RNA sequence: GGGAACGACUCGAGUAGAGUCGAAAACAACAGGGAGGUUGGUGGUGGACGAGCCACUCGCGAACCGGGUCAGGUCCGGAAGGAAGCAGCCCUAACGAGCCAGGCACGGGUCGCCGUGCCAGUACAACUACUGCACUUACUUCGGUAAGUGCAGUAGAAAAGAAACAACAACAACAAC
Reactivity to DMS in 0.01 (KOAc 150mM, MgCl2 10mM, bicine 150mM(pH8.5), 24C), signal-to-noise 2, nucleotides 027 to 126: c090a060a090c110a150g010g020g010a070g020g020u010u010g010g010u000g000g040u010g000g000a020c090g030a080g010c020c020a050c020u000c060g040c030g000a070a110c070c060g000g030g000u000c100a300g000g010u000c000c000g030g000a100a050g000g000a060a050g010c030a140g010c020c000c010u040a050a140c140g020a040g010c030c050a130g010g010c000a010c010g010g000g020u000c220g010c010c050g000u000g000c030c000a080g000u000a070c130a060a100
Reactivity to 2A3 in 0.01 (KOAc 150mM, MgCl2 10mM, bicine 150mM(pH8.5), 24C), signal-to-noise 1, nucleotides 027 to 126: c010a010a000c020a010g010g060g030a080g080g040u130u220g000g020u060g020g030u070g030g030a030c020g000a030g020c020c010a020c000u050c010g050c030g020a050a040c050c000g000g000g020u040c000a000g000g110u040c000c010g050g070a030a040g060g000a060a020g030c020a000g000c000c030c030u010a090a010c060g020a030g000c010c090a110g030g010c010a000c010g000g000g120u130c040g040c120c000g000u000g000c020c000a000g000u050a030c040a050a020
An RNA of 177 nucleotides, treated with DMS and 2A3 and read out base by base.
It was measured as part of the RMDB library M2PK90.